An RNA of 177 nucleotides, treated with 2A3 and DMS and read out base by base. The DMS profile rests on 9,033 reads. 2A3 adducts were read by reverse transcription with SuperScript II with manganese. The 2A3 profile rests on 17,326 reads. The data come from the RNA Mapping Database (RMDB), library M2PK50. The reactions ran in a buffer of 150 mM KOAc, 10 mM MgCl2 and 150 mM bicine (pH 8.5), at 24 C.
RNA sequence: GGGAACGACUCGAGUAGAGUCGAAAACCAUAGGAUUUCGAUCCUAUGGCCUGCUAUGUCGCGUAAUAGCUUUUCGACUCUACUUGGGUCGUUCGCACGCGAUGGGGACCGGUUUCGACCGGUCCAAGCUUAAUUAAUCGUUCGCGAUUAAUUAAGCAAAAGAAACAACAACAACAAC
Reactivity to 2A3 in 0.01 (KOAc 150mM, MgCl2 10mM, bicine 150mM(pH8.5), 24C), signal-to-noise 6, nucleotides 027 to 126: c000c000a000u000a010g010g010a010u010u060u200c250g060a020u000c000c000u000a000u000g000g010c040c060u020g000c000u000a010u050g210u200c120g010c040g300u100a050a030u010a020g010c000u030u000u010u010c000g000a000c000u000c000u010a010c000u000u000g000g000g000u000c000g000u000u000c000g000c000a000c010g150c060g100a110u150g160g040g020g000a000c000c000g000g050u020u080u150c210g080a030c000c000g010g010u000c000c000a000a000
Reactivity to DMS in 0.01 (KOAc 150mM, MgCl2 10mM, bicine 150mM(pH8.5), 24C), signal-to-noise 5, nucleotides 027 to 126: c010c000a000u000a000g010g000a010u000u000u010c210g010a030u000c000c000u000a000u000g000g020c210c120u010g010c010u000a010u000g010u000c170g010c270g000u000a090a010u000a010g000c010u000u000u000u000c000g000a010c000u000c000u000a000c010u000u000g000g000g000u000c000g000u000u000c000g010c010a090c190g010c110g000a090u010g010g020g010g010a020c000c000g000g010u000u000u020c190g000a020c000c000g000g010u000c000c000a010a030